[RMDB]
About this RNA: An RNA of 177 nucleotides, treated with DMS and read out base by base. High DMS reactivity at an A or C suggests that its Watson-Crick edge is free. For DMS the reverse transcriptase was MarathonRT.
RNA sequence: GGGAACGACUCGAGUAGAGUCGAAAAGAUAUGGAUCAAUCGCUAGUUCCUUGGAUUUAAGCUCGGAAACGAGCUUUGUCAGGAACAGCGAGUUGAUCCUAAGUCAAAACCCCCGUUCGCGGGGGAACAUGAUUGCAAUCUUCGGAUUGCAAUCAUGAAAAGAAACAACAACAACAAC
Reactivity to DMS in 0.01 (KOAc 150mM, MgCl2 10mM, bicine 150mM(pH8.5), 24C), signal-to-noise 2, nucleotides 027 to 126: g000a030u000a300u010g010g000a000u000c000a010a040u000c000g010c000u000a180g010u000u000c010c000u000u010g000g010a030u010u000u010a020a000g000c020u000c000g000g000a120a100a230c010g020a010g010c000u010u000u000g010u000c000a030g010g000a020a010c000a020g010c010g010a020g020u000u000g000a020u000c000c000u000a020a100g020u010c080a130a080a170a170c020c000c010c000c000g030u000u010c160g050c010g000g010g010g010g020a000a020